An RNA of 177 nucleotides, treated with DMS and 2A3 and read out base by base. It was measured as part of the RMDB library OK1LIB. For DMS, 14,696 sequencing reads were counted. For DMS the reverse transcriptase was MarathonRT.
[RMDB]
RNA sequence: GGGAACGACUCGAGUAGAGUCGAAAACUAUUUAUAGACAGAACAGUGGAAAACGUAUAUCGCUAUAAACCUUAUACGCCGAUUCUUCCAGUCGUACGAUUCCACAUAGGCGAGGCAUAAGCGAAAGAGGAUAGCAUUUAUUCGUAAAUGCUAUCCUAAAAGAAACAACAACAACAAC
Reactivity to DMS in 0.01 (KOAc 150mM, MgCl2 10mM, bicine 150mM(pH8.5), 24C), signal-to-noise 6, nucleotides 027 to 126: c020u020a090u020u010u030a060u010a080g030a070c160a090g010a080a060c120a100g020u000g000g000a040a010a100a200c040g000u000a010u010a020u010c120g030c020u010a060u020a070a090a120c040c020u010u000a060u010a060c040g000c100c010g010a080u020u010c050u010u030c030c050a090g000u010c050g020u000a060c100g000a170u010u010c020c000a020c060a090u010a060g000g000c040g000a030g000g020c040a070u010a050a100g000c060g000a050a080a090g000
Reactivity to 2A3 in 0.01 (KOAc 150mM, MgCl2 10mM, bicine 150mM(pH8.5), 24C), signal-to-noise 7, nucleotides 027 to 126: c000u010a060u040u140u040a210u080a060g130a010c050a030g110a220a010c030a060g040u040g030g040a030a040a040a010c000g020u030a030u010a010u100c010g000c030u020a030u110a160a090a060c000c000u050u080a040u030a060c060g030c040c020g100a090u060u010c020u090u000c020c020a030g010u060c020g010u030a020c030g030a060u040u000c000c000a030c030a050u060a030g040g030c020g020a030g040g040c020a050u050a150a040g030c040g060a110a040a020g150